[RMDB]
RNA sequence: GGGAACGACUCGAGUAGAGUCGAAAAGUCGGUAUCACAGGUCACUGCGGCCACCGCAGUGAGCAAUGUCGGGAACAUAGUGUCGGCAAUCGAAUCGCGAACGGCCGCCGGGAGAUCGGAUCUGGCAAUCCUAUAGUGGGUUCGCCCACUAUAGGAUAAAAGAAACAACAACAACAAC
Reactivity to DMS in 0.01 (KOAc 150mM, MgCl2 10mM, bicine 150mM(pH8.5), 24C), signal-to-noise 6, nucleotides 027 to 126: g020u000c020g020g010u010a030u010c040a100c090a130g010g000u000c010a080c000u000g010c010g010g000c090c060a110c130c010g020c000a020g010u010g000a090g010c120a100a070u000g020u000c030g010g010g000a110a090c130a080u010a120g010u000g010u000c020g010g000c020a040a070u000c070g010a100a090u010c050g020c010g010a130a130c130g000g010c020c020g020c020c090g010g010g010a100g000a040u000c040g010g010a070u010c030u000g020g010c040a090
Reactivity to 2A3 in 0.01 (KOAc 150mM, MgCl2 10mM, bicine 150mM(pH8.5), 24C), signal-to-noise 5, nucleotides 027 to 126: g020u020c010g010g030u210a040u080c050a040c030a250g010g050u020c010a010c020u010g020c010g030g020c100c040a080c080c030g000c040a050g040u020g050a000g050c030a050a100u040g020u030c010g010g020g120a110a050c040a140u220a120g110u090g080u110c010g000g020c010a020a070u090c030g050a040a040u060c050g000c000g050a060a030c070g020g000c000c000g010c050c030g010g010g010a290g000a040u050c020g020g000a020u030c020u040g010g000c040a050